RNA sequence: GGGAACGACUCGAGUAGAGUCGAAAAUAAAAGAGUGCGUGGUAGCACAAACGAGACCAAUGAUAAGUGCAUGGUCGCACAAGUACAGCUUCGCCUGUACAAAGCGAACAACAACAACAACAAAAAACAAUUAAGGUACGUUCGCGUACCUUAAUUGAAAAGAAACAACAACAACAAC
Reactivity to DMS in 0.01 (KOAc 150mM, MgCl2 10mM, bicine 150mM(pH8.5), 24C), signal-to-noise 5, nucleotides 027 to 126: u010a080a080a120a120g020a190g010u000g020c020g020u010g000g020u000a130g000c010a010c020a040a070a080c120g010a120g000a140c030c030a070a070u020g010a090u010a070a110g010u000g020c050a130u000g010g000u000c020g030c020a050c130a090a140g010u000a010c000a010g000c020u010u000c200g000c210c000u010g010u000a010c000a050a070a110g000c020g000a030a040c020a030a040c020a020a010c050a050a020c110a010a020c050a030a010a080a040a040a070
Reactivity to 2A3 in 0.01 (KOAc 150mM, MgCl2 10mM, bicine 150mM(pH8.5), 24C), signal-to-noise 3, nucleotides 027 to 126: u110a010a090a010a000g160a010g010u050g010c030g020u070g110g090u160a030g020c010a020c050a040a120a000c070g050a040g050a060c030c020a070a070u130g070a080u080a220a060g050u040g140c040a080u090g070g030u060c020g020c010a080c020a100a060g010u000a010c010a000g000c010u080u180c100g030c040c010u000g000u030a020c030a020a040a010g020c010g020a000a020c010a020a000c010a000a000c000a020a000c010a040a000c040a040a090a020a020a000a000